[RMDB]
RNA sequence: GGGAACGACUCGAGUAGAGUCGAAAAAGCCGAAGGUAUCAAAAUCGAUAAGAAAACACCACUCAACACCAAGGUCAUCGUCUGCUACCGCUAUUGUCAACUUGUCGAAGGCAAAAACACCUUCCAACGUCACGUCAAAGACUUGCUAGAACAACACACUUUCGAUCUCUUUCGAGAGAUCGAAAGUAAAAGAAACAACAACAACAAC
Reactivity to 2A3 in 0.01 (KOAc 150mM, MgCl2 10mM, bicine 150mM(pH8.5), 24C), signal-to-noise 2, nucleotides 027 to 156: a000g060c030c000g060a050a000g030g000u060a050u160c060a030a120a090a170u140c140g060a080u110a080a100g060a040a070a020a030c050a010c010c020a050c040u060c030a070a080c030a040c030c010a010a050g010g030u010c040a070u020c020g110u000c050u070g030c000u060a030c020c030g000c090u050a100u070u080g100u080c040a040a050c070u040u030g040u050c030g030a010a010g040g000c030a000a000a000a150a000c010a020c000c010u040u040c020c030a030a040c060g040u030c020a010c040g030u020c100a070a000a000g010a050c020u050u050g050c010u060a040g030a140a040c060a020a000c050a040c000
An RNA of 207 nucleotides, treated with 2A3 and read out base by base. Source: RMDB library OK3TST, as collected in RNAgym. Conditions: 150 mM KOAc, 10 mM MgCl2 and 150 mM bicine (pH 8.5), 24 C. The 2A3 profile rests on 1,059 reads.